Structure probing data (2A3) for a 207-nucleotide construct. The data come from the RNA Mapping Database (RMDB), library RNAMAK. For 2A3 the reverse transcriptase was SuperScript II with manganese. Values are in units of 0.01, from 0 to 300, in steps of 10.
RNA sequence: GGGAACGACUCGAGUAGAGUCGAAAACGCUGGGAUCCAAGUCGAACGCAUAGCAGAGCUGAAGCGCGCACGGCGACGAAGCUAUGCUAUUCGUCUGGAUCCUGUGCUGAAGCGCGCACGGCAACCGAAAGGUGCGAUGCCGGUCUUCGGACCGGAAGUCCCUUUCAUGUUUCGACAUGAAAGGGACAAAAGAAACAACAACAACAAC
Reactivity to 2A3 in 0.01 (KOAc 150mM, MgCl2 10mM, bicine 150mM(pH8.5), 24C), signal-to-noise 2, nucleotides 027 to 156: c010g000c000u010g000g000g010a010u030c000c010a240a220g040u020c000g020a090a090c100g000c000a000u000a020g000c030a040g000a010g040c010u040g020a260a040g020c010g000c000g000c040a040c030g010g000c020g030a200c040g060a120a000g000c000u000a010u010g000c020u020a060u060u050c020g020u010c010u010g030g000a000u000c010c000u000g020u010g020c010u120g020a130a030g010c000g000c000g010c000a020c030g040g000c050a060a070c000c000g080a070a020a040g000g000u020g000c010g010a010u100g070c010c010g000g000u000c000u040u100c160g090g020a000c000c000g010g020a000a000